Source: RMDB library OK3TST, as collected in RNAgym. Chemical mapping of a 207-nucleotide RNA with DMS and 2A3. For 2A3 the reverse transcriptase was SuperScript II with manganese. The DMS profile rests on 7,991 reads.
RNA sequence: GGGAACGACUCGAGUAGAGUCGAAAAUGGAUCUGCAACAACACCAUAUAUCCGCAGAUCCUAAGGAUGUAUGGACAACUGAUCCGAGAGGAUCUACAUUAAGGCGAAGGUCAAAUCUACGUUAAUACCGACCUGAAGCCGAAGGUAUUAACGUACAAAUGGGCAUAUUAUUCGUAAUAUGCCCAUUAAAAGAAACAACAACAACAAC
Reactivity to DMS in 0.01 (KOAc 150mM, MgCl2 10mM, bicine 150mM(pH8.5), 24C), signal-to-noise 4, nucleotides 027 to 156: u020g000g000a040u000c010u010g020c040a150a130c100a060a140c130a140c010c040a030u000a120u000a050u000c020c020g000c060a060g010a070u020c040c010u040a040a040g010g000a040u000g020u000a040u000g020g030a210c070a080a120c080u010g010a060u000c000c010g010a300g010a300g010g000a020u000c020u000a070c080a140u000u010a080a100g020g000c000g000a150a090g010g020u000c050a070a050a110u010c030u000a060c010g010u000u000a010a030u000a010c000c000g010a240c050c040u000g020a080a100g030c090c030g010a060a200g030g000u000a010u000u000a010a020c000g000u000a010c120a040
Reactivity to 2A3 in 0.01 (KOAc 150mM, MgCl2 10mM, bicine 150mM(pH8.5), 24C), signal-to-noise 5, nucleotides 027 to 156: u100g000g020a020u010c010u060g020c030a080a070c010a060a040c030a110c030c060a030u060a010u010a020u100c030c020g000c030a020g010a060u020c000c000u030a080a030g010g010a010u010g000u040a010u020g020g030a050c030a080a060c110u090g010a000u000c010c010g010a030g010a010g050g020a000u000c000u050a040c050a130u100u180a110a030g020g000c070g070a040a010g030g000u010c020a020a040a150u080c070u100a010c010g010u000u000a000a000u000a000c010c000g020a060c030c030u100g090a070a010g040c030c010g000a010a020g000g000u000a010u000u000a010a000c000g000u020a030c060a010